[RMDB]
RNA sequence: GGGAACGACUCGAGUAGAGUCGAAAAAAGGAGAAAAGCCACCUAAAUAGAAACACAACGUCUGUUAAUUACAGAUGUUAACAGGCAAGGACUUUAAAACAACUAUUAUUAGUAUGUUCAAAGAAUUAAAGACAUGAACACAAAAAGGAGAGAAUGACAUUUUAAAUACGUUCGCGUAUUUAAAAUGAAAAGAAACAACAACAACAAC
Reactivity to 2A3 in 0.01 (KOAc 150mM, MgCl2 10mM, bicine 150mM(pH8.5), 24C), signal-to-noise 2, nucleotides 027 to 156: a000a000g090g000a020g030a020a080a030a010g050c060c010a010c040c010u050a030a050a060u300a030g040a040a150a020c060a020c020a070a040c080g000u010c000u000g010u040u040a110a040u100u100a040c050a090g060a060u040g000u020u000a020a030c040a010g000g030c030a040a060g030g010a040c010u030u070u130a020a110a030a020c000a040a000c040u050a020u290u030a060u130u000a170g040u020a100u140g000u050u030c060a060a100a030g040a050a080u150u150a120a070a010g010a010c010a030u050g050a080a000c040a000c020a060a000a080a050a020g030g020a070g030a000g070a090a040u070g010a010
Reactivity to DMS in 0.01 (KOAc 150mM, MgCl2 10mM, bicine 150mM(pH8.5), 24C), signal-to-noise 1, nucleotides 027 to 156: a010a070g000g080a300g000a090a120a110a030g040c020c000a110c090c060u000a020a050a210u000a100g000a210a040a170c050a100c120a070a030c120g030u000c020u000g070u000u000a070a100u000u020a300c010a020g000a010u000g040u000u000a030a050c030a160g000g040c000a020a000g000g030a090c020u000u000u000a050a040a030a020c030a020a030c000u010a100u020u000a160u000u000a050g000u020a070u000g000u000u000c050a030a030a090g000a090a030u000u000a030a000a010g030a040c070a070u000g030a050a020c010a050c010a040a020a110a140a150g000g000a050g000a160g000a030a160u000g000a110
Source: RMDB library OK3TST, as collected in RNAgym.
Structure probing data (2A3 and DMS) for a 207-nucleotide construct.
For 2A3 the reverse transcriptase was SuperScript II with manganese.
Values cover nucleotides 27 to 156.
For 2A3, 1,099 sequencing reads were counted.
Conditions: 150 mM KOAc, 10 mM MgCl2 and 150 mM bicine (pH 8.5), 24 C.